RNA sequence: GGGAACGACUCGAGUAGAGUCGAAAAUUUAGGUCCAAUCUAAUUCUGCAUCAUGGCUUAUUUAUGUAGUCUCGCUUUUGGACCAGAAAAAUCCCCAUUUUUUAUUAUCCUUGUGCUUGUAACACACCCUAGGGAGGCAUUUCGAUGCCUCCCUAGGAAAAGAAACAACAACAACAAC
Reactivity to 2A3 in 0.01 (KOAc 150mM, MgCl2 10mM, bicine 150mM(pH8.5), 24C), signal-to-noise 2, nucleotides 027 to 126: u000u000u110a000g000g000u000c000c000a000a000u000c010u100a010a060u040u020c000u000g020c010a030u050c010a060u080g300g000c140u190u300a110u200u040u040a000u020g000u020a000g000u000c000u020c140g110c100u000u000u000u000g000g000a020c010c000a000g110a020a170a000a000a000u050c030c000c000c000a030u090u030u010u180u130u050a150u100u050a080u070c040c120u010u020g030u000g030c020u090u050g020u210a030a000c000a000c000a010c010
Chemical mapping of a 177-nucleotide RNA with 2A3. Conditions: 150 mM KOAc, 10 mM MgCl2 and 150 mM bicine (pH 8.5), 24 C. For 2A3 the reverse transcriptase was SuperScript II with manganese. It was measured as part of the RMDB library RFM100.